[RMDB]
The record gives the reactivity of an RNA of 177 nucleotides to DMS and 2A3. Source: RMDB library OK1LIB, as collected in RNAgym. For 2A3 the reverse transcriptase was SuperScript II with manganese.

RNA sequence: GGGAACGACUCGAGUAGAGUCGAAAAUGGCUAAGCAUACUCAUCUGGAUAUCGCCACGAUUACCGGCGGCGUGGCCUAUAUGAACCAUGCUGAAGUGUUUAGCGAAAACCAGGAUAUCGUGGUCGCUGAUUAUACCAUGUUCGCAUGGUAUAAUCAAAAAGAAACAACAACAACAAC
Reactivity to DMS in 0.01 (KOAc 150mM, MgCl2 10mM, bicine 150mM(pH8.5), 24C), signal-to-noise 9, nucleotides 027 to 126: u030g010g010c000u000a020a010g010c010a010u010a110c210u020c140a090u030c040u010g010g000a190u020a060u020c190g000c000c010a020c000g010a080u000u020a160c020c010g000g010c030g000g000c020g020u000g010g020c150c080u020a120u040a080u040g020a120a220c010c010a020u010g010c010u000g000a100a090g020u010g010u010u000u010a020g010c010g000a090a030a080a190c010c010a100g000g000a160u020a030u010c020g020u000g000g000u010c130g030c210
Reactivity to 2A3 in 0.01 (KOAc 150mM, MgCl2 10mM, bicine 150mM(pH8.5), 24C), signal-to-noise 9, nucleotides 027 to 126: u130g060g000c010u010a010a000g000c010a020u050a130c050u070c110a160u060c070u090g080g010a090u080a050u160c040g000c010c000a010c010g010a010u030u070a070c000c010g020g000c010g000g000c000g010u000g000g010c010c030u260a240u040a060u300g050a020a020c000c000a010u030g000c000u010g020a140a050g020u010g010u030u030u030a010g000c020g040a060a030a000a040c020c010a020g030g030a070u060a020u100c020g010u010g010g030u060c040g000c090